[RMDB]
RNA sequence: GGGAACGACUCGAGUAGAGUCGAAAAGAUAUGGAACCGCGUAGACAUGAACCGACAUCGGAAACGAUGUCAGGUUCAACAGCUACCGGUUCCUAAGUCAAACGCUCGCGAGUUCGCUCGCGAGCGAGUUAUUCUAGCGGUUCGCCGCUAGAAUAACAAAAGAAACAACAACAACAAC
Reactivity to DMS in 0.01 (KOAc 150mM, MgCl2 10mM, bicine 150mM(pH8.5), 24C), signal-to-noise 1, nucleotides 027 to 126: g010a030u000a020u010g000g000a000a000c000c000g000c300g040u000a000g000a050c060a300u030g000a000a000c010c010g010a020c000a000u000c000g020g010a010a000a020c000g000a000u010g000u010c010a030g010g020u000u000c000a110a050c270a170g000c000u010a000c000c020g000g010u000u010c000c000u000a000a080g000u000c000a290a160a290c020g030c000u000c000g000c000g010a000g000u000u010c300g000c020u010c000g040c020g010a020g010c000g000a020
Reactivity to 2A3 in 0.01 (KOAc 150mM, MgCl2 10mM, bicine 150mM(pH8.5), 24C), signal-to-noise 2, nucleotides 027 to 126: g010a010u020a000u020g000g030a000a000c000c000g020c210g010u010a000g040a090c200a300u300g000a040a000c030c010g000a000c030a010u020c000g010g010a010a010a020c000g000a010u060g000u020c090a020g000g000u000u010c020a030a010c030a000g020c000u000a000c000c000g000g020u000u000c000c000u010a000a000g000u010c000a060a070a200c040g030c030u040c040g110c020g000a030g010u170u200c300g120c260u020c030g010c130g000a010g010c000g000a000